[RMDB]
RNA sequence: GGGAACGACUCGAGUAGAGUCGAAAAUGUGUGCUCGAGAGCCUCCCUGUCCGACAGAGCUUUUAGAUCUUCUGAUCUUUCCCUGGAGGAUAUCGCUUAUGCUUCAAGCGAUUCUCGGUAUAAUUAAACCCCUUAAUCAUUUCGAUGAUUAAGGGGUAAAAGAAACAACAACAACAAC
Reactivity to 2A3 in 0.01 (KOAc 150mM, MgCl2 10mM, bicine 150mM(pH8.5), 24C), signal-to-noise 3, nucleotides 027 to 126: u120g070u010g010u030g000c060u070c130g030a020g010a010g100c000c010u000c000c000c010u020g030u030c010c010g030a020c030a020g080a030g000c000u020u090u040u050a010g000a030u010c010u200u060c160u300g010a030u010c000u010u020u020c000c010c000u020g020g000a020g000g000a060u060a030u060c000g000c000u060u030a050u280g060c050u080u130c090a020a000g010c000g020a020u050u000c010u000c000g040g000u110a080u040a140a120u110u120a070a180
Reactivity to DMS in 0.01 (KOAc 150mM, MgCl2 10mM, bicine 150mM(pH8.5), 24C), signal-to-noise 6, nucleotides 027 to 126: u010g020u000g010u000g000c010u000c030g010a100g010a150g020c050c050u000c010c010c060u010g010u010c030c020g010a160c070a070g010a070g020c300u010u000u010u000a020g000a020u000c000u000u010c300u010g010a010u000c000u000u000u000c010c010c010u000g010g000a140g000g000a040u010a030u000c000g010c010u000u000a090u010g000c150u010u000c100a030a010g010c010g000a010u000u000c010u000c010g000g010u000a050u000a080a140u010u010a080a140